[RMDB]
RNA sequence: GGGAACGACUCGAGUAGAGUCGAAAAGAGAGACGGAUACAGUGUCUCUUUCGCUCGAAAGAACAGAGGUAGAACAAAUGUAAUGGCCGAGAUAUCGUUUCAGUCGUCAUUCUUUGAUUGACGAUUCAUAUGCUCCCUACUUCGGUAGGGAGCAUAUAAAAGAAACAACAACAACAAC
Reactivity to 2A3 in 0.01 (KOAc 150mM, MgCl2 10mM, bicine 150mM(pH8.5), 24C), signal-to-noise 3, nucleotides 027 to 126: g030a000g000a000g020a010c030g010g090a100u230a300c170a140g030u050g230u020c000u000c020u000u000u010c000g040c000u000c010g000a010a040a030g010a020a000c040a030g140a030g080g030u080a020g030a240a000c080a060a190a080u250g040u130a100a090u120g120g020c010c000g090a060g000a040u150a040u100c020g000u000u020u010c030a000g000u000c010g000u010c000a000u030u000c020u120u140u300g010a000u010u010g000a000c000g010a000u020u010c000
Reactivity to DMS in 0.01 (KOAc 150mM, MgCl2 10mM, bicine 150mM(pH8.5), 24C), signal-to-noise 3, nucleotides 027 to 126: g020a020g000a010g030a000c020g020g000a210u060a150c300a080g030u000g010u000c020u030c000u000u010u000c010g030c000u020c020g000a170a120a100g000a040a150c090a090g010a220g010g040u000a130g000a080a140c110a110a070a080u000g040u030a050a130u040g000g000c040c040g000a100g010a150u000a140u020c020g010u000u000u010c000a050g000u000c020g000u010c000a010u000u000c050u000u010u020g010a010u010u000g010a000c000g000a040u000u000c120
Structure probing data (2A3 and DMS) for a 177-nucleotide construct.
The RNA was probed in 150 mM KOAc, 10 mM MgCl2 and 150 mM bicine (pH 8.5) at 24 C.
As a SHAPE reagent, 2A3 marks flexible, mostly unpaired nucleotides at the ribose 2'-OH.
Reactivities are rounded to 0.1 and cut off at 0 and 3.
Source: RMDB libraries RFM100 and RFMREP, as collected in RNAgym.
For 2A3 the reverse transcriptase was SuperScript II with manganese.
For DMS the reverse transcriptase was MarathonRT.